[RMDB]
RNA sequence: GGGAACGACUCGAGUAGAGUCGAAAAGCUCUAGGAGACUAGAGCGAUACGUUAGAGAGCUCGUGGCAUGACUAACGGAUAGCCAGGUAGGAGGUUGCCAGAGGACAUAGCUAUAGCUAUGUCCAAAGAGCUAUCAUUGCUUCGGCAAUGAUAGCUCAAAAGAAACAACAACAACAAC
Reactivity to DMS in 0.01 (KOAc 150mM, MgCl2 10mM, bicine 150mM(pH8.5), 24C), signal-to-noise 1, nucleotides 027 to 126: g000c020u000c000u000a030g000g000a090g000a180c000u000a040g020a000g000c040g000a020u030a010c020g000u010u040a010g000a200g000a180g000c010u000c150g000u100g020g000c060a040u000g000a150c100u050a060a090c000g000g080a040u010a090g020c000c010a070g000g000u010a100g000g000a050g010g000u010u000g000c000c000a100g020a260g010g000a000c010a000u000a000g020c040u000a130u020a050g000c000u000a000u000g030u010c000c000a000a050a000
Reactivity to 2A3 in 0.01 (KOAc 150mM, MgCl2 10mM, bicine 150mM(pH8.5), 24C), signal-to-noise 1, nucleotides 027 to 126: g000c000u000c000u020a000g000g080a020g020a010c000u000a000g000a000g000c000g000a030u070a130c090g000u010u040a010g060a000g000a000g120c060u010c140g070u100g080g000c040a000u090g090a120c010u030a060a000c020g020g020a040u070a060g130c040c000a010g030g030u040a030g000g080a040g000g080u020u050g040c000c000a000g030a070g060g000a000c000a000u000a000g070c070u190a000u010a300g000c000u000a000u000g000u000c000c000a000a000a000